[RMDB]
RNA sequence: GGGAACGACUCGAGUAGAGUCGAAAAAGAGGAAAUGCUGAAUAAUCCCCAGGCACACAGUGUCAGUUUCGAAGAAACAAGUCUAGAAGACCACAGCUGCAUGACUUGUGUCCACGUGGGCCAUUCCAAUACACCGUAAGUGGUGUUAUCCGCAUAGCGACCUCUAAGUGUUCGCACUUAGAGGUCGAAAAGAAACAACAACAACAAC
Reactivity to 2A3 in 0.01 (KOAc 150mM, MgCl2 10mM, bicine 150mM(pH8.5), 24C), signal-to-noise 1, nucleotides 027 to 156: a000g090a020g000g000a050a050a020u050g010c040u040g080a090a100u090a150a110u200c030c020c000c030a000g020g030c000a030c000a000c000a000g010u010g060u090c030a010g030u040u140u150c110g050a150a040g040a100a180a010c030a060a010g000u000c000u050a100g070a210a040g020a130c080c050a080c060a000g060c100u100g000c080a040u030g060a050c000u090u000g000u000g090u040c050c060a060c070g040u240g000g020g070c000c000a040u070u000c000c000a000a020u100a080c000a000c020c000g120u210a230a090g190u260g250g030u040g000u010u000a080u000c020c050g080c050a000u060a050g050
Reactivity to DMS in 0.01 (KOAc 150mM, MgCl2 10mM, bicine 150mM(pH8.5), 24C), signal-to-noise 1, nucleotides 027 to 156: a260g030a170g000g020a060a120a180u000g020c040u030g000a100a170u000a170a220u000c020c000c050c010a170g000g000c000a120c000a030c070a060g000u000g000u010c000a030g020u000u000u000c120g040a240a050g010a060a100a020c030a100a040g000u000c010u000a300g040a190a090g020a300c080c040a130c110a150g030c050u000g050c040a210u020g000a010c060u000u000g020u030g000u030c000c000a040c090g140u010g000g050g050c030c030a060u000u000c000c000a080a050u000a070c010a000c000c010g060u000a180a190g030u000g010g020u000g010u000u000a010u000c040c080g090c040a270u010a140g020